[RMDB]
RNA sequence: GGGAACGACUCGAGUAGAGUCGAAAAGCGGUGAUGACCUGGUAGCCACGCACGGUCAGGUUGAUACGCAGCGCGCGCAGGAUCUGGGGUUCGUCGUCAAUCACCAAGACGAGGGUCAUGGGCGGUCUAGUACGUAAGGGUUCGCCCUUACGUACUAAAAAGAAACAACAACAACAAC
Reactivity to DMS in 0.01 (KOAc 150mM, MgCl2 10mM, bicine 150mM(pH8.5), 24C), signal-to-noise 4, nucleotides 027 to 126: g030c050g000g000u000g010a110u000g010a040c010c020u000g000g010u010a130g000c030c020a080c110g020c140a090c090g010g010u000c020a050g010g000u000u000g000a090u020a080c070g020c030a120g020c080g010c130g010c050g020c050a070g010g010a050u020c060u010g010g020g000g000u010u010c070g010u000c030g010u000c050a050a090u000c110a120c110c120a110a070g000a050c030g000a100g000g000g010u000c050a050u000g000g000g020c050g000g020u000c100
Reactivity to 2A3 in 0.01 (KOAc 150mM, MgCl2 10mM, bicine 150mM(pH8.5), 24C), signal-to-noise 2, nucleotides 027 to 126: g030c040g030g040u080g060a090u100g020a020c000c020u020g000g070u070a030g040c040c000a060c080g150c030a090c080g080g130u300c040a010g020g000u040u050g050a070u090a140c030g000c030a050g000c080g000c000g000c030g020c060a030g060g000a050u030c030u090g100g050g000g000u040u030c000g010u010c010g020u020c090a020a100u110c030a030c080c020a050a020g050a010c020g010a070g010g020g020u020c020a060u070g030g000g020c040g000g000u050c030

An RNA of 177 nucleotides, treated with DMS and 2A3 and read out base by base. DMS adducts were read by reverse transcription with MarathonRT. It was measured as part of the RMDB library OK2TRN. 2A3 adducts were read by reverse transcription with SuperScript II with manganese. The DMS profile rests on 4,837 reads. The reactions ran in a buffer of 150 mM KOAc, 10 mM MgCl2 and 150 mM bicine (pH 8.5), at 24 C.